Chemical mapping of a 207-nucleotide RNA with 2A3 and DMS. The DMS profile rests on 4,925 reads. The RNA was probed in 150 mM KOAc, 10 mM MgCl2 and 150 mM bicine (pH 8.5) at 24 C. DMS adducts were read by reverse transcription with MarathonRT. For 2A3, 5,207 sequencing reads were counted.

RNA sequence: GGGAACGACUCGAGUAGAGUCGAAAAACGUGCCUGUAGUCCCAGCUACUCAGGAGACUGAGGCAGGAGAAUCUCUUGAACCUGGGAAGCGGAGGUUACAGUGAACCGAGAUUGCACCACUGCAGUCCAGCCUGGUGACAGAGCAAAACUCCAUCUCUACGAUAGAUAGUUUCGACUAUCUAUCGUAAAAAGAAACAACAACAACAAC
Reactivity to 2A3 in 0.01 (KOAc 150mM, MgCl2 10mM, bicine 150mM(pH8.5), 24C), signal-to-noise 4, nucleotides 027 to 156: a010c080g040u080g010c020c010u030g050u100a020g060u040c010c020c010a030g010c040u100a060c020u010c050a020g020g020a070g060a050c040u060g020a010g040g030c040a050g020g110a060g030a070a060u020c000u000c000u030u070g030a050a040c000c000u010g010g000g030a060a010g070c070g010g050a050g070g010u040u060a010c010a030g020u020g110a050a030c030c040g020a030g010a130u050u110g010c020a020c050c000a050c050u050g000c010a030g060u020c020c010a020g020c000c010u030g000g010u020g030a060c050a030g040a010g020c050a010a050a030a070c030u010c010c000a070u010c020u020c020
Reactivity to DMS in 0.01 (KOAc 150mM, MgCl2 10mM, bicine 150mM(pH8.5), 24C), signal-to-noise 3, nucleotides 027 to 156: a070c070g030u010g030c010c000u000g030u000a060g020u010c000c020c030a120g020c010u000a100c030u000c030a080g020g010a080g010a140c040u000g010a080g030g030c000a060g000g020a120g020a060a090u000c050u010c020u000u000g010a110a120c110c010u000g010g020g010a120a150g010c070g060g030a050g030g040u000u000a040c020a050g000u000g000a080a080c030c010g030a300g000a050u000u010g010c010a200c030c090a030c060u000g030c040a080g000u000c020c020a030g000c030c030u010g020g040u010g010a230c150a070g010a080g030c070a040a030a070a300c000u010c010c030a120u010c050u000c030